[RMDB]
RNA sequence: GGGAACGACUCGAGUAGAGUCGAAAAGUUGGGGAAUUCGUUCCCCAACACUGAAUAUCUACCGAAGCCGAACGGGAAAACCGGCAUCUAAAAAUAAAUAAAAGCUCUAUGCUUUCGAGCAUAGAAACAUAGACUAUUUAUUCGUAAAUAGUCUAUGAAAAGAAACAACAACAACAAC
Reactivity to DMS in 0.01 (KOAc 150mM, MgCl2 10mM, bicine 150mM(pH8.5), 24C), signal-to-noise 2, nucleotides 027 to 126: g010u000u010g000g000g000g020a000a050u020u010c170g010u000u000c000c000c000c020a000a000c020a040c090u000g010a140a220u010a080u010c060u020a200c000c000g020a040a050g000c010c000g000a060a070c030g000g000g000a090a050a080a100c220c030g050g000c000a040u010c090u010a020a030a120a090a110u000a040a050a070u000a050a100a070a230g050c130u010c000u000a010u000g010c000u000u010u000c130g000a020g000c010a010u000a010g010a000a080a140
Reactivity to 2A3 in 0.01 (KOAc 150mM, MgCl2 10mM, bicine 150mM(pH8.5), 24C), signal-to-noise 2, nucleotides 027 to 126: g010u010u000g000g020g000g010a000a030u050u050c160g060u060u010c010c000c010c000a000a000c000a000c000u010g020a050a030u090a090u260c070u090a070c010c000g020a040a010g000c020c000g010a040a010c010g080g300g000a130a300a000a170c050c000g030g020c010a020u050c030u100a140a100a140a280a300u160a060a090a020u210a080a130a040a020g050c000u000c010u000a010u010g010c000u110u050u090c210g080a000g000c000a000u010a020g000a000a020a000
Structure probing data (DMS and 2A3) for a 177-nucleotide construct. For 2A3, 2,797 sequencing reads were counted. The DMS profile rests on 1,109 reads. The RNA was probed in 150 mM KOAc, 10 mM MgCl2 and 150 mM bicine (pH 8.5) at 24 C. Source: RMDB library M2PK50, as collected in RNAgym. High DMS reactivity at an A or C suggests that its Watson-Crick edge is free.